[RMDB]
RNA sequence: GGGAACGACUCGAGUAGAGUCGAAAAACGCUUCACAAUCUGCGGCAAAGAAACAUUGUUUAUGCAAAGGCACUUCGCAAUGUGUGCUCAAACAUUGCUUAUUCAAACACGCUUCACAAUGUGCGACAAAACUUCACGGUCUUCGGACCGUGAAGAACGCAUCAACAAGGUUCGCCUUGUUGAUGCGAAAAGAAACAACAACAACAAC
Reactivity to 2A3 in 0.01 (KOAc 150mM, MgCl2 10mM, bicine 150mM(pH8.5), 24C), signal-to-noise 3, nucleotides 027 to 156: a000c010g020c060u120u120c040a010c090a060a210u110c050u100g010c010g000g010c050a040a080a090g160a030a100a010c030a020u020u050g080u100u160u040a140u180g020c170a140a110a070g150g000c000a000c010u040u040c050g010c040a040a000u030g020u010g020u010g030c010u090c200a070a050a000c000a000u000u010g000c000u030u140a110u100u120c040a010a040a090c040a010c070g020c020u090u110c030a000c000a020a090u060g020u030g020c000g040a030c080a000a100a030a020c000u000u000c010a000c000g000g000u000c000u050u090c150g090g000a000c000c000g000u000g000a000a000g000a000a000